[RMDB]
RNA sequence: GGGAACGACUCGAGUAGAGUCGAAAACUAGCUUGCUGCAAGCCUUUGUAAGCGCGUCUAUUUGCGUUUUGGCGUCGCUGUUGACAGCAACUUCUGUCGCUAGGUUUCCGUCGCAGUCGCCGCAGCACUCUGCACGAGGUUUCGACCUCGUGCAGAGAAAAGAAACAACAACAACAAC
Reactivity to 2A3 in 0.01 (KOAc 150mM, MgCl2 10mM, bicine 150mM(pH8.5), 24C), signal-to-noise 3, nucleotides 027 to 126: c030u030a010g030c010u010u120g010c000u000g000c030a030a080g040c030c070u090u170u210g220u210a110a040g020c010g000c000g050u000c060u070a160u150u170u230g040c120g020u010u040u080u070g050g000c000g000u120c080g000c020u030g020u110u300g020a020c000a020g050c030a030a020c040u110u080c020u120g240u130c020g040c100u030a010g010g000u000u000u010c030c010g000u010c020g010c000a020g000u150c040g010c050c060g000c010a010g000c000a040